[RMDB]
RNA sequence: GGGAACGACUCGAGUAGAGUCGAAAAGACAAAUGCAGCAUAUUAGGCUAAGCAGGAAAGGGACGGUAGCUCCUGGUGUCAGUUCAUACGGUGUGAUGCAUCUGCGUCGUGCACAGAUGCACCCAAAAAUUAGCCCAAAAUUCGUUUUGGGCUAAUUAAAAGAAACAACAACAACAAC
Reactivity to DMS in 0.01 (KOAc 150mM, MgCl2 10mM, bicine 150mM(pH8.5), 24C), signal-to-noise 9, nucleotides 027 to 126: g000a070c090a040a070a080u010g010c030a040g010c040a070u000a100u000u010a080g010g010c030u000a070a110g010c020a050g000g010a050a080a080g010g010g000a050c070g010g010u000a070g000c060u000c030c030u000g000g010u000g000u000c050a060g010u000u000c050a050u010a080c120g010g010u010g020u010g010a070u000g000c000a010u000c010u000g010c030g000u000c230g000u010g000c130a070c010a010g000a010u000g010c010a050c010c000c030a030a030a060
Reactivity to 2A3 in 0.01 (KOAc 150mM, MgCl2 10mM, bicine 150mM(pH8.5), 24C), signal-to-noise 4, nucleotides 027 to 126: g040a020c040a010a100a030u110g020c010a010g000c020a040u080a110u300u180a110g080g030c020u060a050a030g010c020a020g050g030a060a060a020g020g010g020a000c040g040g030u040a020g020c030u020c020c020u040g010g030u030g030u050c030a060g010u040u070c030a020u070a160c070g050g030u060g050u070g090a060u050g000c000a010u000c010u020g010c000g060u090c040g040u070g030c020a000c000a030g010a000u000g000c010a030c000c000c010a050a120a020